[RMDB]
RNA sequence: GGGAACGACUCGAGUAGAGUCGAAAAUACGGCAGAACUCCAGCCCGUAUGAUCGGCCUAACGUGACCGCCCUAUGGCAAGGACGGGAUUCUGCCUAUCAGGCAUGAACUAAGCGGUCGCGUAGCGGCGGCGACAUCCAAUUCGUUGGAUGUCGCCGAAAAGAAACAACAACAACAAC
Reactivity to DMS in 0.01 (KOAc 150mM, MgCl2 10mM, bicine 150mM(pH8.5), 24C), signal-to-noise 3, nucleotides 027 to 126: u010a020c050g000g010c030a130g000a150a120c190u080c130c170a170g010c090c020c020g000u000a030u020g030a170u000c190g030g000c000c020u020a090a100c040g000u000g000a020c010c000g000c000c010c030u030a160u040g040g010c100a140a030g000g010a120c170g010g030g000a180u020u020c000u000g000c000c000u000a090u010c150a090g040g020c050a000u030g000a020a120c080u010a080a170g010c000g000g020u000c000g010c000g000u000a020g010c140g000g010
Reactivity to 2A3 in 0.01 (KOAc 150mM, MgCl2 10mM, bicine 150mM(pH8.5), 24C), signal-to-noise 4, nucleotides 027 to 126: u030a000c020g010g000c040a030g060a190a080c110u080c070c010a020g020c030c010c000g010u040a050u060g060a060u070c050g060g000c000c010u050a080a010c000g020u000g000a000c000c000g060c020c010c010u160a180u200g100g000c070a050a060g050g010a030c100g050g020g010a020u010u000c000u000g000c000c000u040a220u200c040a010g030g000c010a030u190g040a040a010c020u050a190a000g040c000g000g000u000c000g000c000g000u010a010g030c040g080g010